This 207-nucleotide RNA was probed chemically with 2A3 and DMS. The 2A3 profile rests on 2,721 reads. It was measured as part of the RMDB library OK3TST. For 2A3 the reverse transcriptase was SuperScript II with manganese. Conditions: 150 mM KOAc, 10 mM MgCl2 and 150 mM bicine (pH 8.5), 24 C. The DMS profile rests on 2,928 reads.
[RMDB]
RNA sequence: GGGAACGACUCGAGUAGAGUCGAAAACCCCUGCGUGCCUCUGACCUGACCAGUCCGGCUCGGCUCCGACGCCACCAGCGAACAAGCCCGAAGUCAGAGACCUGGACCGGAACUUCGUAGCGCCAGCUCAGGCCCGAACAAGCCGCUUCCGGCGGGGGAUGUGAUAGUUAUUCGUAACUAUCACAUCAAAAGAAACAACAACAACAAC
Reactivity to 2A3 in 0.01 (KOAc 150mM, MgCl2 10mM, bicine 150mM(pH8.5), 24C), signal-to-noise 3, nucleotides 027 to 156: c000c000c000c030u050g030c020g080u060g000c000c030u000c020u070g040a080c020c000u030g050a070c000c020a020g030u030c030c020g020g010c000u000c030g010g000c000u000c040c050g050a040c020g040c000c040a110c040c050a070g030c000g090a120a070c040a130a010g020c050c030c000g050a070a000g030u020c060a020g040a030g030a220c030c030u110g020g030a080c000c000g010g020a060a070c030u090u060c070g010u080a060g010c030g020c080c010a040g000c050u050c060a050g020g010c000c040c000g020a070a050c030a070a050g040c020c020g040c090u100u050c030c040g010g000c000g000g000g010g020
Reactivity to DMS in 0.01 (KOAc 150mM, MgCl2 10mM, bicine 150mM(pH8.5), 24C), signal-to-noise 1, nucleotides 027 to 156: c030c000c020c030u010g020c040g080u000g010c020c000u030c020u000g030a070c070c010u000g020a100c020c020a170g000u000c080c030g000g030c020u000c070g030g050c010u030c020c110g070a180c060g000c020c090a100c050c100a100g010c030g020a100a180c060a180a200g000c050c020c000g000a070a140g000u000c000a070g020a080g000a020c040c010u010g100g000a120c010c000g000g010a050a060c040u010u000c090g020u000a070g000c090g010c010c010a060g020c070u000c000a120g000g020c040c040c010g050a070a100c050a070a060g030c010c000g000c070u000u000c070c040g000g020c020g000g020g010g040